RNA sequence: GGGAACGACUCGAGUAGAGUCGAAAAUGAAACAUCUUAGUAGGCGGAGGAAAAGAAAGCAAUAUGCGAUGUCGUUAGUAACGGCGAGCGAAAUCGACUUAGAACAAACUGAAUCCCUUUUAGUAAUCAAUACGGACAUAUUCGUAUGUCCGUAUUGAAAAGAAACAACAACAACAAC
Reactivity to 2A3 in 0.01 (KOAc 150mM, MgCl2 10mM, bicine 150mM(pH8.5), 24C), signal-to-noise 4, nucleotides 027 to 126: u170g030a020a050a000c050a040u030c020u110u040a080g030u030a040g110g000c030g020g040a030g030g080a050a070a030a040g110a050a070a000g030c060a100a060u120a100u260g040c040g070a090u100g050u010c000g000u010u100a090g010u020a080a000c010g040g000c030g040a020g040c040g070a010a000a030u120c020g030a030c010u010u030a060g030a050a040c060a060a050a010c010u060g050a030a050u040c000c000c000u010u070u030u110a140g040u090a050a090u000
Reactivity to DMS in 0.01 (KOAc 150mM, MgCl2 10mM, bicine 150mM(pH8.5), 24C), signal-to-noise 4, nucleotides 027 to 126: u010g030a180a090a080c140a040u010c060u000u010a080g020u000a050g000g020c020g020g010a080g000g000a050a060a090a070g000a080a080a090g000c060a060a060u020a060u030g010c030g010a080u000g010u000c010g020u000u020a080g000u030a130a060c080g000g020c070g020a130g000c030g010a020a090a070u030c030g000a070c060u000u010a070g010a070a060c090a040a050a060c110u010g000a090a100u020c030c000c030u000u020u040u010a090g000u010a080a060u020